[RMDB]
RNA sequence: GGGAACGACUCGAGUAGAGUCGAAAAGCAGUAGAAACCAUGCGUGCUUGCUAGAGCUGGAAAUGAUGCUGGUAGCAUUGCAUGGUUCAGGGAUCACAGAUCUCGUGCCAAAGGAGAAUUGCCCUGCCUAAUACCCGAUGUUCGCAUCGGGUAUUAGAAAAGAAACAACAACAACAAC
Reactivity to DMS in 0.01 (KOAc 150mM, MgCl2 10mM, bicine 150mM(pH8.5), 24C), signal-to-noise 4, nucleotides 027 to 126: g000c030a090g010u010a120g010a180a020a030c000c000a010u000g000c010g020u000g010c010u000u010g060c020u000a050g000a030g010c020u000g010g020a180a160a130u010g010a050u010g010c000u000g010g020u000a010g010c010a010u000u020g020c010a010u000g000g000u000u000c030a080g010g000g000a040u000c020a150c220a120g010a020u000c010u000c010g000u000g000c040c090a050a090a100g010g010a120g000a080a120u000u000g000c010c010c000u010g010c160
Reactivity to 2A3 in 0.01 (KOAc 150mM, MgCl2 10mM, bicine 150mM(pH8.5), 24C), signal-to-noise 3, nucleotides 027 to 126: g000c020a000g020u180a040g090a110a000a020c000c010a000u000g000c000g020u020g000c010u080u160g010c000u050a020g030a030g220c040u060g060g150a090a140a180u200g080a070u210g050c010u010g020g000u020a000g000c040a010u150u300g010c000a000u000g000g000u010u000c000a000g000g010g000a000u020c030a030c030a300g020a020u020c020u020c030g040u050g030c040c040a080a130a000g120g060a100g020a120a080u050u090g050c000c000c010u020g010c010
Structure probing data (DMS and 2A3) for a 177-nucleotide construct. DMS adducts were read by reverse transcription with MarathonRT. The reactions ran in a buffer of 150 mM KOAc, 10 mM MgCl2 and 150 mM bicine (pH 8.5), at 24 C. The DMS profile rests on 3,713 reads. For 2A3, 2,885 sequencing reads were counted. It was measured as part of the RMDB library RFMREP. 2A3 adducts were read by reverse transcription with SuperScript II with manganese.